An RNA of 207 nucleotides, treated with 2A3 and read out base by base. The RNA was probed in 150 mM KOAc, 10 mM MgCl2 and 150 mM bicine (pH 8.5) at 24 C.
RNA sequence: GGGAACGACUCGAGUAGAGUCGAAAAUGGCUUCUCCUGGGCGAUCGCUCGCUGUUUUUGUGGCUGGCUUUCAGCGGGCUGGAGGAGCCGGGAGCGGAGGCGGAGGACCGAGCCAACAACGUCAGCCUAUAGAGGAAGCUGUUCGCAGCUUCCUCAACGAUCACGAAUAAUUCGUUAUUCGUGAUCGAAAAGAAACAACAACAACAAC
Reactivity to 2A3 in 0.01 (KOAc 150mM, MgCl2 10mM, bicine 150mM(pH8.5), 24C), signal-to-noise 2, nucleotides 027 to 156: u110g000g000c020u000u000c000u010c000c020u070g000g140g000c050g070a100u110c070g020c040u000c000g000c000u010g110u080u060u020u080u170g110u030g040g000c010u000g000g030c020u010u030u020c010a000g000c010g020g000g000c040u050g000g050a020g010g010a010g020c000c000g000g000g000a050g000c030g010g060a030g040g060c070g010g060a030g010g030a030c040c040g030a020g000c030c020a040a060c030a080a060c080g040u040c030a000g010c000c010u070a130u080a100g000a000g000g000a000a000g000c010u010g050u120u110c240g000c160a010g000c000u000u000c010c000u000c000a010a000